Structure probing data (DMS) for a 177-nucleotide construct.

[RMDB]
RNA sequence: GGGAACGACUCGAGUAGAGUCGAAAAGACGGAUUCUUCGGAAUCCGUCAAAGUGAGGGUGAAAAAUGGCCAAUGCGCCAGCUACCACCGACACAGGGCGCAAAACUGGAGUGUUCGCACUCCAGAAUCAUAGGGACGGGUUCGCCCGUCCCUAUGAAAAAGAAACAACAACAACAAC
Reactivity to DMS in 0.01 (KOAc 150mM, MgCl2 10mM, bicine 150mM(pH8.5), 24C), signal-to-noise 2, nucleotides 027 to 126: g020a030c000g000g000a000u000u000c000u000u020c200g040g000a010a020u000c000c000g010u000c000a020a040a050g000u000g000a080g000g000g030u010g000a010a050a050a140a140u000g010g010c000c020a110a070u000g050c140g030c000c000a110g000c060u000a130c080c000a040c000c020g020a100c050a040c090a110g020g000g010c020g040c080a050a040a100a210c010u000g020g010a000g010u000g010u000u010c180g000c000a020c010u000c000c010a000g000a040a090
The RNA was probed in 150 mM KOAc, 10 mM MgCl2 and 150 mM bicine (pH 8.5) at 24 C. It was measured as part of the RMDB library M2PK50. Reactivities are rounded to 0.1 and cut off at 0 and 3.